Chemical mapping of a 177-nucleotide RNA with 2A3 and DMS. The reactions ran in a buffer of 150 mM KOAc, 10 mM MgCl2 and 150 mM bicine (pH 8.5), at 24 C. For 2A3, 74,765 sequencing reads were counted. DMS adducts were read by reverse transcription with MarathonRT.
RNA sequence: GGGAACGACUCGAGUAGAGUCGAAAAACUAGUAUGUACACGAUGAGACUGCCGUGUCGUCUAGACUGCGGAUCCAAUUAUCUCAGAUCUGCGAGAUAUUGUCUCAAGAGUACGAGACAAGUACUCAGAGUUAUGACUACUUCGGUGGUCGUAACUCAAAAGAAACAACAACAACAAC
Reactivity to 2A3 in 0.01 (KOAc 150mM, MgCl2 10mM, bicine 150mM(pH8.5), 24C), signal-to-noise 9, nucleotides 027 to 126: a000c010u010a010g050u100a030u030g070u070a000c010a000c010g030a050u100g020a030g070a060c060u070g100c050c000g000u010g000u000c000g000u000c000u010a030g030a120c030u040g000c000g010g000a000u000c010c020a040a090u140u010a130u100c080u010c050a020g000a030u000c000u010g010c020g030a020g010a010u190a040u040u060g010u000c000u000c010a030a010g070a020g080u070a040c060g000a010g040a060c070a060a020g030u020a030c010u000c030a020
Reactivity to DMS in 0.01 (KOAc 150mM, MgCl2 10mM, bicine 150mM(pH8.5), 24C), signal-to-noise 9, nucleotides 027 to 126: a130c010u000a020g010u040a010u010g000u050a010c010a020c020g000a130u010g000a110g010a080c070u020g010c070c000g010u000g010u000c010g000u010c000u010a030g000a170c080u020g000c010g010g000a020u000c030c180a100a110u030u000a080u020c120u010c130a130g000a030u010c030u010g000c030g010a050g010a080u030a060u020u010g010u000c010u000c000a090a010g000a080g020u020a030c060g010a080g000a070c160a050a080g010u010a060c010u010c010a140